[RMDB]
RNA sequence: GGGAACGACUCGAGUAGAGUCGAAAAGUAAUAGAUAAGUGGAUGACGAGAAAGGGUGCGCUGAUAUCCACUACGAAUGCUAGCAGUAAAUGGAAUAGCGCUCCUAAUACAACUAGCAACAAAAGGAUAAGGUAUCGUGAUGUCAAUCACAUUGCGAUCCACCGUAGUAUUUCGAUACUACGGUGGAAAAAGAAACAACAACAACAAC
Reactivity to DMS in 0.01 (KOAc 150mM, MgCl2 10mM, bicine 150mM(pH8.5), 24C), signal-to-noise 2, nucleotides 027 to 156: g000u000a100a070u000a150g010a080u000a100a110g030u000g040g070a040u010g030a180c060g040a060g020a190a140a250g010g030g020u000g000c130g040c040u000g060a160u000a150u000c020c020a030c020u000a120c100g000a130a160u000g010c060u010a080g010c020a190g020u010a030a020a140u020g010g010a090a150u000a160g000c150g000c030u000c020c020u030a070a220u000a090c040a070a020c000u010a070g000c000a030a150c140a060a100a070a050g000g030a080u000a020a050g020g030u000a040u000c010g060u000g020a080u000g010u020c030a060a230u000c190a080c000a040u000u010g020c000g000a120
Reactivity to 2A3 in 0.01 (KOAc 150mM, MgCl2 10mM, bicine 150mM(pH8.5), 24C), signal-to-noise 4, nucleotides 027 to 156: g050u030a020a100u060a080g060a060u060a190a050g010u010g060g000a020u030g030a010c060g000a010g120a160a060a070g040g040g040u070g020c000g000c020u020g040a020u040a080u090c000c030a030c030u010a040c040g090a090a000u080g060c040u030a020g010c060a040g040u050a020a120a140u090g000g010a020a050u030a030g000c010g000c030u020c000c010u010a060a000u050a020c010a040a050c020u010a010g020c010a020a040c020a050a100a030a020g080g000a060u090a140a030g020g030u070a010u060c010g000u010g000a010u010g000u030c050a050a040u070c000a040c000a010u030u030g000c000g000a000
An RNA of 207 nucleotides, treated with DMS and 2A3 and read out base by base. Values cover nucleotides 27 to 156. DMS adducts were read by reverse transcription with MarathonRT. Source: RMDB library OK3TST, as collected in RNAgym. High DMS reactivity at an A or C suggests that its Watson-Crick edge is free. Conditions: 150 mM KOAc, 10 mM MgCl2 and 150 mM bicine (pH 8.5), 24 C. The 2A3 profile rests on 2,456 reads.